[RMDB]
Chemical mapping of a 170-nucleotide RNA with 2A3 and DMS. For 2A3, 14,845 sequencing reads were counted. The reactions ran in a buffer of 150 mM KOAc, 10 mM MgCl2 and 150 mM bicine (pH 8.5), at 24 C.
RNA sequence: GGGAACGACUCGAGUAGAGUCGAAAAUUUGUAAAGAGGAGACUGCUGGACUCGCCGCCCAAGUUCGAGAGGGGCCAAAAUGCCGAACGAAGGGAACGCGGGGGAAGGAUCAUAUGACGAGAGGGGAGGACGCCAUAGUUCGCUAUGGCGAAAAGAAACAACAACAACAAC
Reactivity to 2A3 in 0.01 (KOAc 150mM, MgCl2 10mM, bicine 150mM(pH8.5), 24C), signal-to-noise 6, nucleotides 027 to 129: u120u070u100g080u070a030a040a030g030a020g010g030a000g020a100c020u040g040c040u040g060g000a080c010u020c060g050c030c000g040c010c020c010a040a040g030u070u070c030g000a000g010a030g070g030g010g020c010c010a050a040a020a030u180g020c010c000g000a030a010c030g030a060a040g010g000g010a030a020c060g000c060g040g000g010g000g010a000a040g040g010a010u000c020a030u070a070u160g040a040c030g020a000g010a030g060g000g020g000a000g010g000a010
Reactivity to DMS in 0.01 (KOAc 150mM, MgCl2 10mM, bicine 150mM(pH8.5), 24C), signal-to-noise 5, nucleotides 027 to 129: u030u040u040g020u050a040a040a060g040a040g040g010a060g000a070c000u000g020c090u000g010g000a000c000u020c120g020c060c080g050c010c010c020a050a100g030u000u040c050g020a100g020a010g040g040g060g000c060c060a020a010a030a040u060g000c050c030g020a080a080c080g030a090a050g000g000g000a040a030c080g000c120g040g010g030g010g000a020a050g020g010a000u000c040a040u010a090u030g030a060c120g000a060g020a040g000g000g000g010a040g000g030a070